[RMDB]
RNA sequence: GGGAACGACUCGAGUAGAGUCGAAAAUUCAAACUUUGAGUAAAGAAAAGGGGAAUGUACUGUGGGUACAAUUAUUUGUCAAGAUUGCAAUGAAACCAUUGAUCAAUUUGAAAAUGAAAAAGUGACAAGAGCAUGAAGUAUUCGUACUUCAUGCUCUAAAAGAAACAACAACAACAAC
Reactivity to DMS in 0.01 (KOAc 150mM, MgCl2 10mM, bicine 150mM(pH8.5), 24C), signal-to-noise 4, nucleotides 027 to 126: u020u010c060a070a110a130c080u010u020u000g000a150g000u030a060a080a080g010a110a040a040a080g010g010g020g000a140a050u000g000u000a040c030u010g050u020g020g000g010u010a020c050a060a140u000u010a020u000u000u000g000u000c040a040a030g000a030u010u010g000c040a000a010u010g000a170a120a110c250c000a020u000u020g010a120u030c010a010a000u000u000u000g010a020a030a020a040u010g000a030a060a010a110a070g010u010g000a060c150a050
Reactivity to 2A3 in 0.01 (KOAc 150mM, MgCl2 10mM, bicine 150mM(pH8.5), 24C), signal-to-noise 2, nucleotides 027 to 126: u110u020c010a090a030a090c060u160u110u160g050a080g040u160a070a130a010g040a040a030a010a000g010g000g070g010a050a080u050g020u010a010c030u030g050u140g210g130g040u010a000c050a030a010u140u030a080u020u070u080g180u030c020a040a020g050a100u000u030g000c000a000a020u030g020a230a110a070c080c000a030u000u000g020a040u100c010a000a000u000u000u020g020a030a020a010a000u040g080a010a090a040a000a000g110u080g080a040c100a050